[RMDB]
RNA sequence: GGGAACGACUCGAGUAGAGUCGAAAAGAUAUGGAUAUAGAUCUCGUGAGGAGCGAAGAACUCGGAAACGAGGGAGCUCCCACGAUCUCUAUAUCCUAAGUCAAAGGACGACCUUCGGGUCGUCCAACAUGUGAUAUACGUUCGCGUAUAUCACAUGAAAAGAAACAACAACAACAAC
Reactivity to DMS in 0.01 (KOAc 150mM, MgCl2 10mM, bicine 150mM(pH8.5), 24C), signal-to-noise 5, nucleotides 027 to 126: g010a040u010a300u010g000g000a010u000a010u000a010g000a020u000c170u000c000g020u010g010a180g010g010a020g020c000g000a070a110g000a070a220c000u000c000g000g000a130a100a170c010g000a010g000g000g000a120g010c010u000c010c000c010a000c000g010a010u000c120u000c000u000a000u000a010u000c000c000u000a010a050g010u000c030a100a140a110g000g010a010c000g000a010c000c000u000u010c220g030g010g030u000c000g000u000c000c000a030a070
Reactivity to 2A3 in 0.01 (KOAc 150mM, MgCl2 10mM, bicine 150mM(pH8.5), 24C), signal-to-noise 5, nucleotides 027 to 126: g040a020u110a040u170g010g000a000u000a000u010a020g000a010u000c010u000c030g000u010g050a300g020g010a010g010c020g130a300a050g040a080a050c010u010c020g000g050a090a050a030c010g000a020g010g000g000a010g010c000u000c010c000c000a010c010g000a000u010c000u000c000u010a010u000a000u010c000c000u000a080a010g030u010c050a080a070a180g000g010a000c000g000a000c010c000u070u120c300g140g010g000u000c000g000u000c010c000a000a010

This 177-nucleotide RNA was probed chemically with DMS and 2A3. Reactivities are given for positions 27 through 126. For DMS, 6,159 sequencing reads were counted.